[RMDB]
This 177-nucleotide RNA was probed chemically with 2A3 and DMS.
The DMS profile rests on 3,264 reads.
Source: RMDB library OK2TRN, as collected in RNAgym.

RNA sequence: GGGAACGACUCGAGUAGAGUCGAAAAGCGUUCAUGAGUCCACAUGAACGAGAGCAUUCUCAGUUCAGAGAGUGCAGAGCCUUCUCUCAACUGAGAGGGCAGACUAAUGUGUGGACUCACAUUAGGAGCACAGCUUACUAUUCGUAGUAAGCUGUGCAAAAGAAACAACAACAACAAC
Reactivity to 2A3 in 0.01 (KOAc 150mM, MgCl2 10mM, bicine 150mM(pH8.5), 24C), signal-to-noise 3, nucleotides 027 to 126: g040c010g020u010u010c030a020u020g010a000g030u000c010c000a010c010a020u020g010a020a010c030g070a090g000a010g020c010a020u030u000c010u000c000a100g140u260u140c110a040g020a010g010a010g040u030g000c020a020g030a020g070c010c000u020u000c010u010c000u020c040a120a300c130u120g010a000g000a000g000g010g010c010a000g060a030c020u040a030a040u050g000u000g000u010g010g040a020c010u000c010a000c000a000u040u040a020g060g040a040
Reactivity to DMS in 0.01 (KOAc 150mM, MgCl2 10mM, bicine 150mM(pH8.5), 24C), signal-to-noise 3, nucleotides 027 to 126: g010c040g000u000u000c020a050u000g000a040g000u000c030c020a040c000a010u000g020a030a040c020g000a100g000a090g020c030a020u000u000c000u000c010a190g010u010u030c300a140g000a020g000a010g020u010g010c020a140g010a180g000c020c010u000u000c000u000c000u000c150a110a080c170u000g000a010g000a020g000g010g030c030a020g000a160c010u000a010a030u010g010u000g000u000g000g010a020c020u000c000a000c040a010u000u000a030g020g020a300